RNA sequence: GGGAACGACUCGAGUAGAGUCGAAAAUACAUACAAUCAUGAGAAAAACAUGAGACAAAUUCCAUGAUUAGGACAUCCUACAAAAUACAUGACCAGUACUCCUCAAAACUCUCAAGGUCACCAAAAGUAAGGAAAGUUUGAGAAACUGCCACAGCCACCUUGUGCCCUUAUUCGUAAGGGCACAAGGAAAAGAAACAACAACAACAAC
Reactivity to 2A3 in 0.01 (KOAc 150mM, MgCl2 10mM, bicine 150mM(pH8.5), 24C), signal-to-noise 2, nucleotides 027 to 156: u140a010c060a000u190a020c140a110a010u020c020a010u020g050a020g090a260a100a100a110a070c120a010u190g090a060g110a050c090a070a060a130u060u030c010c000a020u000g000a020u000u020a050g000g000a040c030a050u010c020c020u050a050c060a050a100a030a000u130a060c040a040u020g030a020c000c010a020g050u080a120c020u060c020c000u050c030a000a000a120a140c100u100c000u030c040a100a060g000g000u000c020a050c000c000a010a030a070a020g050u110a050a050g010g010a100a100a000g010u050u060u010g000a080g000a010a090a000c040u100g010c020c050a020c000a050g260c020c220a000